The record gives the reactivity of an RNA of 207 nucleotides to DMS and 2A3. Reactivities are given for positions 27 through 156. 2A3 is a SHAPE reagent: it acylates the 2'-hydroxyl of flexible nucleotides of all four kinds.
[RMDB]
RNA sequence: GGGAACGACUCGAGUAGAGUCGAAAACAGGAUGGUCUCGAUCUCCUGACCUCAUGAUCUGCCCGCCUUGGCCUCCCAAAGUGCUGGGAUUACAGACGUGAGCCACCGCGCCCAGCCAAAUGAUGGUAGAUUUCUCGUGAGAAACUGGACGCUAGAGACCUUACUCCCAAUUCGUUGGGAGUAAGGUAAAAGAAACAACAACAACAAC
Reactivity to DMS in 0.01 (KOAc 150mM, MgCl2 10mM, bicine 150mM(pH8.5), 24C), signal-to-noise 1, nucleotides 027 to 156: c020a030g020g030a090u000g000g000u000c020u010c030g000a140u010c060u010c020c000u080g010a050c050c010u000c010a100u010g010a060u000c020u010g020c060c040c040g010c010c000u020u000g000g020c060c010u000c030c000c000a030a130a060g030u010g020c020u000g070g030g000a070u010u000a170c060a020g020a060c000g020u010g000a150g000c050c020a070c030c000g000c010g000c040c030c020a020g010c010c010a060a130a090u010g010a120u000g000g020u010a100g030a190u000u020u000c030u000c070g020u010g000a110g000a120a040a080c030u000g020g020a080c050g000c000u000a060g000a170g000
Reactivity to 2A3 in 0.01 (KOAc 150mM, MgCl2 10mM, bicine 150mM(pH8.5), 24C), signal-to-noise 2, nucleotides 027 to 156: c000a000g020g010a040u100g030g000u020c000u050c050g110a120u040c010u030c010c000u060g040a060c000c010u010c000a000u020g070a300u000c000u040g010c000c000c000g040c040c030u010u020g030g020c050c060u230c040c060c010a060a070a000g150u230g050c110u300g010g000g000a010u080u180a090c000a000g040a010c010g020u000g000a010g000c030c020a070c020c040g000c000g030c000c020c000a020g050c030c010a060a040a110u200g090a080u110g070g010u100a110g050a300u060u160u010c070u030c070g180u150g080a030g050a030a040a020c000u010g030g010a010c010g000c050u090a030g000a000g000
Source: RMDB library OK3TST, as collected in RNAgym.